Chemical mapping of a 177-nucleotide RNA with DMS and 2A3.
RNA sequence: GGGAACGACUCGAGUAGAGUCGAAAACAAUAGUGUCUUUAACAUUUUGCAGGCGACAACUGCUAAUGUCAGUGCACUUAUGGGUGCUAAUGGCAACAAGAUUGUUGACAAAGAAGUUAAAGACAUGCACUACGUAGAUGUUCGCAUCUACGUAGUGAAAAGAAACAACAACAACAAC
Reactivity to DMS in 0.01 (KOAc 150mM, MgCl2 10mM, bicine 150mM(pH8.5), 24C), signal-to-noise 4, nucleotides 027 to 126: c080a100a070u010a140g010u000g000u000c010u010u000u000a000a010c000a150u000u000u000u000g000c260a260g010g000c010g000a020c030a010a020c020u000g010c150u010a090a100u000g020u000c000a020g000u000g000c000a000c000u000u010a110u020g010g000g030u000g000c010u000a050a040u000g000g020c020a040a100c100a100a100g000a210u000u000g000u010u000g000a070c020a040a140a070g000a020a030g000u000u000a000a020a010g010a010c020a000u000g000
Reactivity to 2A3 in 0.01 (KOAc 150mM, MgCl2 10mM, bicine 150mM(pH8.5), 24C), signal-to-noise 4, nucleotides 027 to 126: c030a010a080u110a140g030u010g010u010c010u000u010u010a040a030c030a270u060u000u000u110g130c120a060g030g060c020g030a010c010a020a010c010u070g010c070u110a080a090u020g000u000c000a010g020u010g040c000a010c000u090u130a180u270g230g000g000u010g010c020u070a270a120u040g020g000c010a020a030c030a080a000g010a050u000u020g010u010u010g010a020c010a000a030a010g040a050a010g000u010u000a010a000a000g000a000c000a000u010g000
Source information:
Conditions: 150 mM KOAc, 10 mM MgCl2 and 150 mM bicine (pH 8.5), 24 C. Reactivities are given for positions 27 through 126. Source: RMDB library 15KREP, as collected in RNAgym.